[RMDB]
RNA sequence: GGGAACGACUCGAGUAGAGUCGAAAAUGUGAAUUGUGUGACAAACUGUUACAUCAUUCAUGCGUUCAAGCGAGGGGUCUCUGAAGACGGUAUUCGUGGGAUCAGCUCAAACGAAAGAGGGAGGCGGUGCACAUGUUGGCUUCGGCCAACAUGUGCAAAAAGAAACAACAACAACAAC
Reactivity to DMS in 0.01 (KOAc 150mM, MgCl2 10mM, bicine 150mM(pH8.5), 24C), signal-to-noise 1, nucleotides 027 to 126: u000g010u010g010a010a000u000u000g040u010g000u010g010a030c010a180a210a150c250u010g010u000u010a000c010a010u000c220a030u000u000c010a020u000g010c300g000u000u000c060a130a140g020c160g010a150g010g000g010g030u000c000u000c000u000g000a000a120g000a110c140g000g000u000a130u010u000c080g000u000g010g010g010a110u000c030a090g000c010u010c040a010a070a100c160g000a020a030a060g000a050g020g010g000a070g000g000c060g020g000